[RMDB]
RNA sequence: GGGAACGACUCGAGUAGAGUCGAAAAGGGUAUUCAAACCCAUAACUGUCUGCAGUGGCACUCCCAUUCUUACGAUGAGGCCAGGCAUCGAUAUGAGUGAUCCUCUGGUUAUGAGGAGAGAUGAAAGACCGAGUAAGUCAUUCGUGACUUACUCGGUAAAAGAAACAACAACAACAAC
Reactivity to DMS in 0.01 (KOAc 150mM, MgCl2 10mM, bicine 150mM(pH8.5), 24C), signal-to-noise 2, nucleotides 027 to 126: g010g000g000u000a060u000u010c210a040a160a190c020c010c000a090u010a100a060c100u010g020u000c050u000g010c140a020g000u010g010g040c070a070c080u010c050c100c030a110u000u010c030u000u000a100c050g000a030u000g000a130g020g010c020c020a080g000g000c000a030u000c040g010a170u010a060u010g010a040g000u000g000a180u010c000c020u000c020u000g040g000u000u000a090u010g010a020g000g020a070g010a220g010a060u000g000a070a060a170g000
Reactivity to 2A3 in 0.01 (KOAc 150mM, MgCl2 10mM, bicine 150mM(pH8.5), 24C), signal-to-noise 2, nucleotides 027 to 126: g000g000g010u060a100u040u180c100a100a080a090c060c030c010a010u060a050a050c040u030g080u090c090u130g060c100a030g050u090g070g000c020a010c070u000c040c030c010a030u030u030c020u020u140a080c050g010a030u040g030a040g010g000c000c050a040g000g080c000a010u040c030g060a070u040a080u250g100a050g040u070g000a080u030c010c020u020c010u080g100g180u230u100a080u220g000a060g080g000a050g000a000g000a040u180g050a120a050a010g030